This 177-nucleotide RNA was probed chemically with DMS and 2A3.
Values are in units of 0.01, from 0 to 300, in steps of 10.
The DMS profile rests on 1,333 reads.
[RMDB]
RNA sequence: GGGAACGACUCGAGUAGAGUCGAAAAGAAAACAAGUACCGAGAACAUUGUUUUCGCUGCUUGGCGUUGCCGUUUUGUGUUGCAGUUGGUUGGGUAACGCCGCAAAUACCAACAGUAGAGAGAGAUACACUGCCUACCUGUUCGCAGGUAGGCAGUGAAAAGAAACAACAACAACAAC
Reactivity to DMS in 0.01 (KOAc 150mM, MgCl2 10mM, bicine 150mM(pH8.5), 24C), signal-to-noise 1, nucleotides 027 to 126: g000a100a010a080a130c080a000a050g070u010a070c280c010g000a020g000a090a030c000a220u010u070g030u000u000u000u000c020g000c200u000g020c030u000u000g000g040c000g020u000u000g010c000c010g060u070u030u050u060g000u000g000u040u000g000c110a080g000u000u000g000g000u000u000g000g000g000u000a070a020c220g000c050c010g000c020a000a120a080u000a050c000c000a020a000c030a200g020u000a110g010a100g000a060g000a160g000a090u050a120
Reactivity to 2A3 in 0.01 (KOAc 150mM, MgCl2 10mM, bicine 150mM(pH8.5), 24C), signal-to-noise 1, nucleotides 027 to 126: g000a000a000a000a000c000a010a000g000u110a050c100c000g030a010g000a070a000c030a300u180u260g000u050u030u000u000c000g000c000u000g050c030u140u120g000g000c000g000u000u000g010c000c000g010u060u040u070u240g300u040g120u120u160g060c050a040g000u080u040g010g030u100u140g080g000g000u000a000a000c000g000c010c010g000c010a020a060a000u300a060c010c010a000a000c000a020g010u110a040g020a060g000a000g050a000g000a140u060a180